[RMDB]
RNA sequence: GGGAACGACUCGAGUAGAGUCGAAAAGUCCGGACUAUAGAAGAGUAGCAGACUCGGAAGCAAACACACUACUGCAGCGCGCGUAUUAUUCUGCUGCUAAAUUAGUGGUGGAAAAGAACAUCAAAUCGGAUAUCAACCUAUUCGUAGGUUGAUAUCCAAAAGAAACAACAACAACAAC
Reactivity to DMS in 0.01 (KOAc 150mM, MgCl2 10mM, bicine 150mM(pH8.5), 24C), signal-to-noise 2, nucleotides 027 to 126: g010u000c020c000g000g020a070c000u000a100u020a090g000a200a100g000a070g020u000a060g000c030a060g000a080c090u000c070g010g020a110a130g000c040a080a080a100c130a130c060a040c040u010a040c080u000g040c060a070g010c030g030c160g000c170g010u020a080u030u000a110u020u010c040u000g010c000u000g000c000u000a040a120a040u000u000a010g050u000g010g000u000g000g000a060a030a090a050g000a140a050c100a060u010c120a020a060a100u020c200
Reactivity to 2A3 in 0.01 (KOAc 150mM, MgCl2 10mM, bicine 150mM(pH8.5), 24C), signal-to-noise 1, nucleotides 027 to 126: g060u000c020c000g040g000a060c020u040a000u090a240g080a190a000g050a040g060u050a000g010c060a010g040a060c000u000c070g040g040a040a000g010c050a020a120a000c030a000c010a010c130u080a000c050u070g000c010a040g060c000g000c030g000c050g000u070a100u210u100a110u240u000c010u080g000c000u010g000c000u050a020a100a180u140u080a030g010u010g050g030u000g000g020a000a000a000a030g070a040a040c050a090u130c060a010a020a130u210c140

Chemical mapping of a 177-nucleotide RNA with DMS and 2A3. 2A3 adducts were read by reverse transcription with SuperScript II with manganese. For 2A3, 1,157 sequencing reads were counted. Values are in units of 0.01, from 0 to 300, in steps of 10. Source: RMDB library OK2TST, as collected in RNAgym. The DMS profile rests on 1,464 reads. DMS adducts were read by reverse transcription with MarathonRT.